[RMDB]
RNA sequence: GGGAACGACUCGAGUAGAGUCGAAAAGAUUCAGGUACUCCCGUUGUUGAGUAUCUGUCUAAAGAAGACCUACAUACAUUGUAUGUAGACCCUAAGUAUCAAGUCAUUGUCUUAAAAGACAAUGUACGCCCCCUGCGCUUCGGCGCAGGGAAAAGAAACAACAACAACAAC
Reactivity to DMS in 0.01 (KOAc 150mM, MgCl2 10mM, bicine 150mM(pH8.5), 24C), signal-to-noise 3, nucleotides 027 to 129: g010a010u010u010c090a030g000g000u000a040c020u000c070c260c160g030u130u000g000u070u000g030a000g000u000a000u030c020u000g010u000c030u060a100a100a000g060a300a010g110a300c170c000u000a000c000a040u010a000c010a220u060u240g040u030a000u030g040u020a000g040a200c000c000c000u060a040a080g040u050a140u040c290a130a210g000u010c030a060u000u010g020u040c010u040u040a080a060a090a000g030a000c000a020a000u030g030u090a050c010g060c030c060
Reactivity to 2A3 in 0.01 (KOAc 150mM, MgCl2 10mM, bicine 150mM(pH8.5), 24C), signal-to-noise 3, nucleotides 027 to 129: g100a000u000u000c010a020g050g000u010a040c000u000c000c120c040g040u020u040g000u020u000g000a010g000u000a020u000c000u000g000u000c020u090a150a050a000g110a000a000g120a050c020c000u000a020c000a010u000a000c000a010u090u300g020u000a000u000g010u040a030g070a070c000c000c000u020a130a170g070u070a110u300c110a130a020g000u000c000a040u010u010g000u000c000u050u110a090a160a000a000g000a000c000a030a000u000g000u000a010c010g040c000c000